[RMDB]
RNA sequence: GGGAACGACUCGAGUAGAGUCGAAAAGCUCUAGGAGACUAGAGCAAUACGUACGAGCGAUCGUGUCACUGAACUCAGAUCGCCAGUUCAGAGGCUGUCAAAGGACAUAGCUAUAGCUAUGUCCAAAGACCAUACAUAGGUUCGCCUAUGUAUGGUCAAAAGAAACAACAACAACAAC
Reactivity to 2A3 in 0.01 (KOAc 150mM, MgCl2 10mM, bicine 150mM(pH8.5), 24C), signal-to-noise 6, nucleotides 027 to 126: g000c000u000c000u010a010g010g030a090g030a060c000u000a010g000a000g000c000a000a010u060a020c020g050u020a030c020g030a030g030c010g000a020u010c020g010u010g010u020c020a070c300u170g120a160a010c000u020c030a040g020a040u020c000g010c020c000a010g000u020u020c020a010g020a050g110g040c080u070g050u130c090a070a030a120g010g000a010c000a000u000a000g000c020u110a040u090a300g000c000u000a000u000g000u000c000c000a010a000a000
Reactivity to DMS in 0.01 (KOAc 150mM, MgCl2 10mM, bicine 150mM(pH8.5), 24C), signal-to-noise 6, nucleotides 027 to 126: g000c000u000c000u010a010g010g000a240g000a230c000u010a000g000a010g020c000a060a040u010a070c160g000u010a020c050g010a130g000c160g000a060u000c010g000u000g000u000c010a170c070u020g000a050a010c000u020c090a140g010a030u000c050g030c080c070a060g000u000u000c030a040g000a090g000g010c020u000g010u010c080a090a090a160g010g000a020c000a000u010a010g000c000u030a130u040a120g000c000u000a000u000g000u000c010c010a000a010a060